[RMDB]
RNA sequence: GGGAACGACUCGAGUAGAGUCGAAAAGAGAGUGCCGCGUGCACACGCGCGUAGGCUUCCCCCGCAAGUCACUGUUAGCCCGCCAAGAAGCGACCCCUCCGGGGCGAGCUGAGCGGCGUGCGGCGGGGGUCAUUUAUUUGUUCGCAAAUAAAUGACCAAAAGAAACAACAACAACAAC
Reactivity to DMS in 0.01 (KOAc 150mM, MgCl2 10mM, bicine 150mM(pH8.5), 24C), signal-to-noise 9, nucleotides 027 to 126: g000a130g000a080g010u010g010c010c010g000c010g010u000g010c030a160c300a070c300g010c000g010c010g010u010a080g050g000c010u010u000c010c000c000c000c010g020c050a090a080g010u020c060a050c030u000g010u010u010a130g020c030c020c010g010c000c020a080a180g010a120a030g000c010g000a300c300c010c010c000u010c200c110g010g010g010g010c000g000a260g000c010u000g000a180g000c110g000g000c010g010u000g010c010g000g000c010g010g000g010
Reactivity to 2A3 in 0.01 (KOAc 150mM, MgCl2 10mM, bicine 150mM(pH8.5), 24C), signal-to-noise 9, nucleotides 027 to 126: g170a010g020a010g050u120g010c010c010g000c030g010u010g000c020a080c030a080c300g010c000g000c000g020u110a250g000g000c000u030u030c010c000c000c000c000g010c040a080a070g060u200c040a010c110u090g050u170u080a040g040c010c030c000g000c010c010a100a050g100a070a000g060c010g060a100c000c000c000c010u040c070c160g030g000g000g000c010g010a010g000c000u010g010a030g040c020g000g000c010g000u010g000c000g000g000c010g000g010g010
Description
The record gives the reactivity of an RNA of 177 nucleotides to DMS and 2A3. Conditions: 150 mM KOAc, 10 mM MgCl2 and 150 mM bicine (pH 8.5), 24 C. For 2A3 the reverse transcriptase was SuperScript II with manganese. It was measured as part of the RMDB libraries RFM100 and RFMREP.